[RMDB]
RNA sequence: GGGAACGACUCGAGUAGAGUCGAAAAAGGCAUGGUCGGUGUCUCGCCCCGCUUCAUCGGCGACGAGAUCGCCGAGGCGAUCAUGGACUCGAAACACCGCUCUCGGGGCUUUCUCUCGCCGCUGACGCGCGUAAUAAAAUUUCGAUUUUAUUACGCGAAAAGAAACAACAACAACAAC
Reactivity to 2A3 in 0.01 (KOAc 150mM, MgCl2 10mM, bicine 150mM(pH8.5), 24C), signal-to-noise 5, nucleotides 027 to 126: a010g020g000c030a020u070g110g270u270c130g090g000u020g010u010c010u010c030g070c010c000c010c000g000c050u040u030c010a020u020c010g000g000c000g020a020c160g010a020g010a030u010c020g000c070c000g000a000g000g000c000g010a020u100c050a070u090g080g040a060c060u040c260g090a080a120a050c010a000c000c030g020c010u050c010u000c070g090g000g120g050c060u020u050u010c000u000c000u000c000g010c010c000g020c010u010g000a020c030g020
Reactivity to DMS in 0.01 (KOAc 150mM, MgCl2 10mM, bicine 150mM(pH8.5), 24C), signal-to-noise 8, nucleotides 027 to 126: a050g000g010c010a020u000g010g020u010c140g010g020u000g000u000c010u000c060g000c140c010c010c050g000c060u000u000c030a030u000c010g000g010c010g010a020c180g000a040g000a070u000c030g010c000c010g000a010g010g010c000g010a070u010c200a150u000g000g010a110c110u010c190g010a130a110a090c090a040c150c010g000c020u010c010u000c010g010g000g010g010c300u000u000u000c020u000c010u000c010g010c010c010g010c090u000g000a020c210g010
Background:
An RNA of 177 nucleotides, treated with 2A3 and DMS and read out base by base. It was measured as part of the RMDB library OK2TRN. For DMS, 13,293 sequencing reads were counted. For 2A3 the reverse transcriptase was SuperScript II with manganese. The RNA was probed in 150 mM KOAc, 10 mM MgCl2 and 150 mM bicine (pH 8.5) at 24 C.